[RMDB]
RNA sequence: GGGAACGACUCGAGUAGAGUCGAAAAACUGAUACCUUACGAGGUAUCCGAAUGACUUCGUGGUAGAGCGCCACGAACGGAAAAUAAAGAAAGCUCGAUUGAAACGCACCGUGUACGCACGGUGCGAAAAAGUCGAUCCAGUUCGCUGGAUCGACAACACUAUGAGGAUCUUCGGAUCCUCAUAGUGAAAAGAAACAACAACAACAAC
Reactivity to 2A3 in 0.01 (KOAc 150mM, MgCl2 10mM, bicine 150mM(pH8.5), 24C), signal-to-noise 1, nucleotides 027 to 156: a000c040u010g000a000u000a000c000c000u040u060a040c280g120a050g060g010u020a000u000c020c020g200a180a100u170g090a060c150u040u040c020g000u000g010g000u020a200g010a000g000c000g000c000c010a010c020g000a000a000c050g110g060a080a000a000a040u020a010a010a020g140a040a070a000g000c010u000c000g220a170u020u300g090a060a080a000c000g000c000a000c000c000g080u010g000u000a030c110g000c140a000c000g030g010u000g000c000g000a000a000a000a000a000g000u000c000g000a000u000c030c000a000g040u110u030c110g110c140u010g000g000a000u000c010g010a000c000a000a000
The data come from the RNA Mapping Database (RMDB), library M2RFPK. Structure probing data (2A3) for a 207-nucleotide construct. Values cover nucleotides 27 to 156.